[RMDB]
RNA sequence: GGGAACGACUCGAGUAGAGUCGAAAAACUGUUUCGACAGUACAUGCUCCUAAGUCUUCGAAUCCUUGGAUUUAGCUAGGGAGGCAUGUCGGAAACGACAUGCCGAAGAACUAGCUUGUCAGGAUGAAGAUAUGGACCCAAUCUACUUCGGUAGAAAAGGAUGUUUAACAUUCGUGUUAAACAUCCUAAAAGAAACAACAACAACAAC
Reactivity to 2A3 in 0.01 (KOAc 150mM, MgCl2 10mM, bicine 150mM(pH8.5), 24C), signal-to-noise 8, nucleotides 027 to 156: a000c050u040g030u030u130u100c220g090a020c010a010g010u080a030c050a180u170g080c030u030c020c000u040a140a070g020u000c010u020u030c040g160a160a100u030c020c040u120u210g190g000a070u290u300u150a000g000c000u000a010g000g010g010a010g000g000c000a000u000g000u000c010g020g030a090a060a020c010g000a000c000a000u000g000c000c000g020a030a000g000a000a010c000u000a000g000c000u000u000g010u000c010a000g000g010a010u030g000a010a000g010a000u020a030u070g000g000a010c020c010c000a030a060u030c000u020a010c010u040u060c180g090g010u030a010g020a030a140a030
Reactivity to DMS in 0.01 (KOAc 150mM, MgCl2 10mM, bicine 150mM(pH8.5), 24C), signal-to-noise 3, nucleotides 027 to 156: a040c010u010g000u000u000u000c170g000a060c020a000g000u000a090c110a140u000g010c070u010c010c010u000a050a260g030u000c010u000u000c020g000a100a090u010c000c010u000u010g050g030a030u000u000u000a030g010c000u000a020g020g010g010a250g010g020c020a010u000g010u040c000g030g010a180a110a270c000g030a030c000a000u000g010c020c010g030a020a090g030a110a240c000u000a040g010c010u000u000g010u000c010a040g000g010a050u000g010a060a030g010a040u010a300u000g010g000a080c070c010c020a060a210u000c010u000a010c020u000u000c300g010g010u000a020g000a010a060a160
Structure probing data (2A3 and DMS) for a 207-nucleotide construct.
The RNA was probed in 150 mM KOAc, 10 mM MgCl2 and 150 mM bicine (pH 8.5) at 24 C.
For DMS, 5,344 sequencing reads were counted.
2A3 is a SHAPE reagent: it acylates the 2'-hydroxyl of flexible nucleotides of all four kinds.
For 2A3 the reverse transcriptase was SuperScript II with manganese.